[RMDB]
Record summary: This 177-nucleotide RNA was probed chemically with DMS and 2A3. The DMS profile rests on 1,200 reads. The RNA was probed in 150 mM KOAc, 10 mM MgCl2 and 150 mM bicine (pH 8.5) at 24 C. For DMS the reverse transcriptase was MarathonRT.
RNA sequence: GGGAACGACUCGAGUAGAGUCGAAAAGAUAUGGACGCAAGCAACAGCCUACUGGGAUCGGAAACGAUCCUUAGGACAUGCUUGGUCCUAAGUCAAACGAUUUGCUUUGUUCGCAAAGCAAAUCGAAGUUACAAGUGGACUUCGGUCCACUUGUAACAAAAGAAACAACAACAACAAC
Reactivity to DMS in 0.01 (KOAc 150mM, MgCl2 10mM, bicine 150mM(pH8.5), 24C), signal-to-noise 2, nucleotides 027 to 126: g000a010u000a300u000g010g000a010c000g000c000a010a000g020c010a010a100c300a160g020c000c010u000a030c300u010g010g000g000a000u010c000g000g020a060a050a130c000g000a020u000c000c000u000u000a000g000g030a050c120a130u000g000c010u000u000g000g000u000c010c000u000a040a080g000u000c030a080a160a180c040g000a000u000u000u000g010c000u000u000u000g020u030u020c220g040c030a000a000a000g020c000a000a000a010u000c000g030a010a070
Reactivity to 2A3 in 0.01 (KOAc 150mM, MgCl2 10mM, bicine 150mM(pH8.5), 24C), signal-to-noise 2, nucleotides 027 to 126: g010a030u030a030u050g020g010a030c050g010c300a010a020g000c010a000a130c050a230g180c000c010u070a150c150u140g030g000g020a010u010c000g020g000a010a000a040c010g000a000u000c000c030u010u000a000g010g000a100c010a090u050g000c020u000u020g020g000u030c000c010u000a080a000g040u020c020a100a040a070c020g010a010u010u020u010g010c000u000u050u000g050u090u150c300g000c180a000a000a000g000c000a000a000a000u030c000g000a030a000
High 2A3 reactivity points to a flexible backbone, as in loops and unpaired stretches.